[RMDB]
RNA sequence: GGGAACGACUCGAGUAGAGUCGAAAAUGACAAUGCCAGUCGCUGUGUUCGGCUUGCCCGGAGUGCCCUAUUGUGAGAAGAUGAACAUGAAUUCUUCUCCUGGGUGGCCAUAUCAGGUACUCCCUGAGCAUCGCGGCCAGAAAGGUAAGGCGUAUCACUCAUCCACUGAGUUCGCUCAGUGGAUGAGAAAAGAAACAACAACAACAAC
Reactivity to 2A3 in 0.01 (KOAc 150mM, MgCl2 10mM, bicine 150mM(pH8.5), 24C), signal-to-noise 2, nucleotides 027 to 156: u120g030a010c090a080a060u100g060c030c000a020g000u040c010g000c060u080g000u020g050u220u000c010g040g040c000u060u130g120c000c000c090g010g040a030g100u150g030c000c020c030u140a150u100u240g070u120g070a040g070a010a010g010a000u100g040a090a070c130a140u110g140a140a100u060u010c000u000u010c000u000c020c000u030g000g000g040u060g020g000c010c000a050u050a060u280c020a020g000g010u110a110c010u090c060c000c000u010g000a010g040c030a010u050c100g010c000g000g100c000c010a040g070a070a030a000g060g020u080a140a060g050g050c050g000u000a030u090c010a010